RNA sequence: GGGAACGACUCGAGUAGAGUCGAAAAACGUAUGGGCGCUGGCAUGUCUUCGAAAUUGAUUGACUUAUGGACAUGUGAGGUGGCUGCGAGCUAGCAGCGCCAGGGGACUUGUCGCACCUGAGCGCGCAUACCAAGAAGCAUUCGUGCUUCUUGGUAUAAAAGAAACAACAACAACAAC
Reactivity to 2A3 in 0.01 (KOAc 150mM, MgCl2 10mM, bicine 150mM(pH8.5), 24C), signal-to-noise 9, nucleotides 027 to 126: a000c070g070u100a060u100g060g050g000c020g000c010u010g030g000c010a010u010g010u000c000u060u050c050g160a180a230a210u190u230g090a140u050u100g020a050c030u120u140a110u300g020g010a000c010a010u020g030u050g040a080g040g010u060g120g000c000u010g010c010g020a040g110c060u100a020g010c040a010g000c010g000c010c000a000g000g000g000g010a020c000u040u060g020u030c020g010c020a030c010c000u010g020a030g000c010g000c010g010c010
Reactivity to DMS in 0.01 (KOAc 150mM, MgCl2 10mM, bicine 150mM(pH8.5), 24C), signal-to-noise 8, nucleotides 027 to 126: a090c100g010u020a060u010g000g000g010c020g010c010u000g010g010c020a010u000g000u010c020u000u000c070g000a070a100a140u030u030g010a070u010u010g010a070c080u000u010a070u030g000g000a030c020a010u000g000u010g000a240g000g020u000g010g020c000u010g010c010g010a150g020c140u020a090g000c010a020g010c010g000c000c000a060g020g000g000g000a070c030u000u010g010u000c020g010c220a040c010c010u000g000a060g010c010g010c020g010c070